This 177-nucleotide RNA was probed chemically with DMS and 2A3. The reactions ran in a buffer of 150 mM KOAc, 10 mM MgCl2 and 150 mM bicine (pH 8.5), at 24 C.
RNA sequence: GGGAACGACUCGAGUAGAGUCGAAAACGUCAGCUACACUAUUAUUUUGCCAGUCAACAACGCUACCCAUAGAGCCUUGCUUAUCAUCCACUUUGAACACGUAGCGCGUGUAGUUGGUUGGGCGAUAACGAUCGCAUCAUUUCGAUGAUGCGAUCGUAAAAGAAACAACAACAACAAC
Reactivity to DMS in 0.01 (KOAc 150mM, MgCl2 10mM, bicine 150mM(pH8.5), 24C), signal-to-noise 2, nucleotides 027 to 126: c070g020u000c020a070g040c000u010a080c010a080c030u020a070u000u010a130u020u000u010u020g000c030c050a110g000u000c040a060a090c140a080a100c040g000c010u000a090c020c070c040a060u010a080g030a060g010c000c070u000u000g030c110u010u000a040u000c050a030u000c010c010a110c110u010u000u000g020a080a090c020a110c160g000u000a050g000c130g010c090g000u010g020u000a080g000u010u000g020g010u000u000g020g010g010c060g000a060u000a070
Reactivity to 2A3 in 0.01 (KOAc 150mM, MgCl2 10mM, bicine 150mM(pH8.5), 24C), signal-to-noise 2, nucleotides 027 to 126: c030g060u020c050a000g000c030u100a000c030a020c050u140a060u300u090a130u060u300u100u060g020c010c000a020g050u100c000a040a060c010a000a030c030g010c000u030a010c000c030c000a030u080a020g080a000g000c000c100u050u170g000c080u180u100a060u150c030a050u000c010c000a070c070u130u060u110g040a070a040c010a000c120g040u020a010g000c080g010c020g030u020g030u060a060g000u040u030g050g000u030u090g060g040g030c040g030a030u030a050
The DMS profile rests on 1,394 reads.